Structure probing data (2A3 and DMS) for a 177-nucleotide construct. It was measured as part of the RMDB library OK2TST. For DMS the reverse transcriptase was MarathonRT.
RNA sequence: GGGAACGACUCGAGUAGAGUCGAAAACAUUGAACAAUCUUCGCAGAACCCCAACAGUCUGCAGUACAUCAACCAGUUGGAGGACUACUCGCGCUACCAGCGCACAGAGAGCAUCGAUGAGCAGCUCCGAGAAUACAUAGUUCGCUAUGUAUUCUCGAAAAGAAACAACAACAACAAC
Reactivity to 2A3 in 0.01 (KOAc 150mM, MgCl2 10mM, bicine 150mM(pH8.5), 24C), signal-to-noise 8, nucleotides 027 to 126: c030a050u070u160g030a050a020c040a060a110u060c030u160u110c100g000c030a050g020a140a130c020c040c020c040a020a030c010a030g070u010c020u020g000c010a010g040u070a040c040a090u070c020a030a060c070c020a060g030u040u050g090g050a060g010g020a020c020u050a040c010u050c030g000c000g010c010u110a200c040c080a030g010c020g000c060a010c020a030g150a000g000a000g030c020a040u090c070g140a130u120g050a030g020c040a010g000c020u000c030
Reactivity to DMS in 0.01 (KOAc 150mM, MgCl2 10mM, bicine 150mM(pH8.5), 24C), signal-to-noise 9, nucleotides 027 to 126: c060a150u000u000g000a080a100c090a130a100u000c060u000u010c100g020c040a040g010a090a100c050c020c020c100a090a100c170a110g000u000c020u000g020c030a070g010u010a090c110a060u000c060a040a060c080c060a090g000u000u010g010g020a150g010g010a100c030u010a050c050u000c040g020c040g020c030u010a120c160c130a090g010c030g020c050a070c120a070g000a100g010a080g020c060a060u000c060g000a100u010g000a080g020c090a070g010c060u010c090